[RMDB]
RNA sequence: GGGAACGACUCGAGUAGAGUCGAAAAGUAGAGUUCGCUCUACGAGACCUUUGUGGAAUAGGGAGCUGGUAGGGAGGCGCUCACCCAUUGGGUGAGCGAACUACCUCCUUUCCAGCGAAGAACUAUUCCACUCUGGUAUUAGGGUAGUUCGCUACCCGAUACCCGGCAGAUUCGUCUGCCGGGUAUCAAAAGAAACAACAACAACAAC
Reactivity to 2A3 in 0.01 (KOAc 150mM, MgCl2 10mM, bicine 150mM(pH8.5), 24C), signal-to-noise 1, nucleotides 027 to 156: g000u000a010g020a030g020u050u110c220g080c060u000c010u000a000c000g000a040g090a020c000c000u020u010u010g000u010g020g000a000a000u000a010g000g010g020a000g040c000u000g000g030u020a050g000g000g000a020g010g000c020g000c000u030c030a030c000c060c230a300u180u300g020g020g030u030g020a000g000c050g000a000a000c000u090a050c000c000u000c000c000u000u010u000c000c000a000g000c020g000a020a000g000a000a000c000u000a000u020u010c000c000a000c000u000c020u050g030g010u060a200u110u240a130g010g000g010u020a040g020u020u100c190g000c050u010a010c000c000c000